[RMDB]
RNA sequence: GGGAACGACUCGAGUAGAGUCGAAAACAACUGGCAUAGGAACCAAUACUGCUAGUAAGACAGUAUUAAUCGACUAUGAGAAAUAUGGACAAUUCCAUAAUUUAUCAAUUAAAGGUACGAUUGAUCACAGGGGGUAACCUUUCGAGGUUACCCCCUGAAAAGAAACAACAACAACAAC
Reactivity to 2A3 in 0.01 (KOAc 150mM, MgCl2 10mM, bicine 150mM(pH8.5), 24C), signal-to-noise 2, nucleotides 027 to 126: c010a000a020c010u000g030g030c010a130u080a130g110g050a130a070c070c000a050a030u050a180c040u020g010c000u000a000g070u160a090a010g120a100c020a010g050u140a040u000u010a000a040u020c000g000a040c010u050a050u170g030a000g080a060a100a000u010a000u030g040g020a010c070a120a180u200u010c020c000a000u000a030a140u040u070u040a120u030c040a130a000u020u230a220a020a140g040g040u110a100c030g000a030u000u040g010a020u040c010a000
Reactivity to DMS in 0.01 (KOAc 150mM, MgCl2 10mM, bicine 150mM(pH8.5), 24C), signal-to-noise 1, nucleotides 027 to 126: c040a270a100c000u000g020g030c000a000u000a060g000g000a120a290c060c070a070a130u000a220c110u040g000c000u000a020g000u000a200a130g000a190c230a070g030u040a000u000u000a000a020u000c000g000a060c000u000a060u000g000a000g000a040a040a000u000a000u000g000g000a040c300a110a280u000u000c040c040a020u000a000a000u000u000u000a080u000c000a060a020u040u050a110a060a180g000g000u010a060c000g040a000u000u000g040a010u000c020a140